[RMDB]
RNA sequence: GGGAACGACUCGAGUAGAGUCGAAAAUACGUAUAUAGCGCUAUAGCUAGCGCGCGCUACGAUCGCGUACGUAGCCGGCUAGCCGAUGCGCAUCGAUUAAUUAGCCGGCAUAUCGUAUAAUGCCGCGAAAUUAUUAACAAUUCGUUGUUAAUAAUUUAAAAGAAACAACAACAACAAC
Reactivity to 2A3 in 0.01 (KOAc 150mM, MgCl2 10mM, bicine 150mM(pH8.5), 24C), signal-to-noise 9, nucleotides 027 to 126: u060a000c010g050u030a080u030a030u060a300g010c000g000c010u020a020u040a100g000c000u000a010g000c280g010c000g010c070g000c180u000a010c020g150a210u120c070g030c080g200u040a040c010g000u000a010g000c000c000g010g000c000u000a000g000c000c010g020a020u060g010c000g000c010a000u000c000g010a020u020u200a150a080u080u120a080g140c070c010g010g000c010a010u040a030u100c030g010u110a040u020a140a030u020g000c000c000g000c000g000
Reactivity to DMS in 0.01 (KOAc 150mM, MgCl2 10mM, bicine 150mM(pH8.5), 24C), signal-to-noise 9, nucleotides 027 to 126: u000a030c030g010u010a120u010a120u010a140g010c000g010c000u000a300u010a170g000c040u000a010g010c000g010c030g030c210g010c010u000a010c010g010a110u000c110g020c200g010u000a070c010g010u000a010g010c000c000g010g000c000u000a010g010c020c010g000a130u010g000c030g010c020a060u010c130g000a140u010u010a080a120u010u010a060g030c140c010g000g000c010a020u000a040u010c030g000u000a040u000a100a040u000g000c000c010g020c040g000